Background
The record gives the reactivity of an RNA of 177 nucleotides to 2A3 and DMS. For DMS the reverse transcriptase was MarathonRT. High 2A3 reactivity points to a flexible backbone, as in loops and unpaired stretches.
[RMDB]
RNA sequence: GGGAACGACUCGAGUAGAGUCGAAAAUCAAAGACCGUACAGCACACUCAGACUGUACGACAGUCUGACACACACGUACGCUAGUCCAACGAGAGAGAGAGAGCGUUGGAACAAGUGUGUGAAAAAACAGAGACAUUAGUUUCGACUAAUGUCUCUGAAAAGAAACAACAACAACAAC
Reactivity to 2A3 in 0.01 (KOAc 150mM, MgCl2 10mM, bicine 150mM(pH8.5), 24C), signal-to-noise 7, nucleotides 027 to 126: u110c050a090a090a010g030a040c010c050g010u030a010c010a020g030c050a030c020a050c130u120c040a060g100a300c030u010g010u050a050c020g000a010c030a010g000u000c000u020g050a000c000a000c010a000c000a000c020g080u230a040c080g050c190u120a040g080u000c010c000a010a010c010g010a010g000a010g000a010g000a000g000a000g010a150g030c000g000u000u010g010g020a020a020c020a090a090g010u010g000u000g000u000g020a090a020a000a000a000a010
Reactivity to DMS in 0.01 (KOAc 150mM, MgCl2 10mM, bicine 150mM(pH8.5), 24C), signal-to-noise 4, nucleotides 027 to 126: u020c070a080a160a040g000a030c060c000g010u010a020c030a030g010c050a070c110a110c220u020c190a110g000a110c000u000g010u000a040c050g000a110c160a090g010u000c000u000g000a190c020a000c000a010c010a000c020g000u010a080c130g010c190u020a060g000u000c000c020a000a010c000g000a060g010a140g000a130g000a090g000a080g010a070g000c000g000u000u000g000g000a030a040c080a080a060g000u000g000u000g010u000g000a000a030a040a070a040a070